[RMDB]
RNA sequence: GGGAACGACUCGAGUAGAGUCGAAAAGUGGUCGAGUGCGAAGCACUGGGGUAGAGAAAUAAAUAGAGAGAGAUCUACCCCGUCAGUCAGUCACUCUCUGUCUGAAUCUCUCUCUCAAAGACCACGACACUGACCAUCGGUUCGCCGAUGGUCAGUGAAAAGAAACAACAACAACAAC
Reactivity to 2A3 in 0.01 (KOAc 150mM, MgCl2 10mM, bicine 150mM(pH8.5), 24C), signal-to-noise 2, nucleotides 027 to 126: g010u010g000g000u000c000g030a010g010u010g000c160g210a180a060g020c030a000c040u060g000g000g000g000u000a000g000a000g280a100a100a030u290a100a030a030u220a030g000a000g000a000g000a000g000a000u000c010u020a000c020c020c000c000g000u030c000a010g020u060c000a000g040u000c000a100c210u120c070u000c000u020g000u000c010u000g050a060a060u000c000u000c000u010c000u000c000u000c060a030a170a000g000a000c000c000a000c000g010a000